This 177-nucleotide RNA was probed chemically with 2A3 and DMS. Reactivities are given for positions 27 through 126. It was measured as part of the RMDB library OK2TST.
[RMDB]
RNA sequence: GGGAACGACUCGAGUAGAGUCGAAAACUUUGUAUCCCAUGGCGAGGCGCUCGCGACGUGUAAGCGAGCUGAUGUCUUCUUCGGCUGCAUCUGGGAUCUCAUAACCUUCGCGGAUGCCUUUAAGUCCAUUAGGUUCACGUUUCGACGUGAACCUAAUAAAAGAAACAACAACAACAAC
Reactivity to 2A3 in 0.01 (KOAc 150mM, MgCl2 10mM, bicine 150mM(pH8.5), 24C), signal-to-noise 1, nucleotides 027 to 126: c060u080u160u180g060u130a020u020c030c030c020a040u030g010g000c000g020a000g000g000c010g000c020u000c000g000c000g010a000c020g060u120g050u200a060a120g050c060g030a000g040c050u000g000a000u030g030u000c000u060u020c040u010u030c100g130g000c020u060g020c000a000u050c060u060g090g080g140a190u060c010u000c050a180u220a160a070c000c000u040u030c030g000c000g040g000a020u000g000c040c020u030u050u070a030a040g030u000c030c030
Reactivity to DMS in 0.01 (KOAc 150mM, MgCl2 10mM, bicine 150mM(pH8.5), 24C), signal-to-noise 2, nucleotides 027 to 126: c110u000u010u010g030u010a090u000c000c010c000a150u020g000g010c040g000a030g010g010c030g010c010u000c000g050c020g000a020c160g000u010g010u010a050a180g020c140g000a120g020c030u010g000a020u000g000u010c080u000u000c040u030u000c130g010g010c100u010g000c030a030u010c060u000g020g020g000a130u010c060u000c040a110u000a120a090c040c010u000u000c020g020c010g030g010a030u000g010c020c080u000u010u000a020a050g000u020c030c010
For 2A3 the reverse transcriptase was SuperScript II with manganese.
The reactions ran in a buffer of 150 mM KOAc, 10 mM MgCl2 and 150 mM bicine (pH 8.5), at 24 C.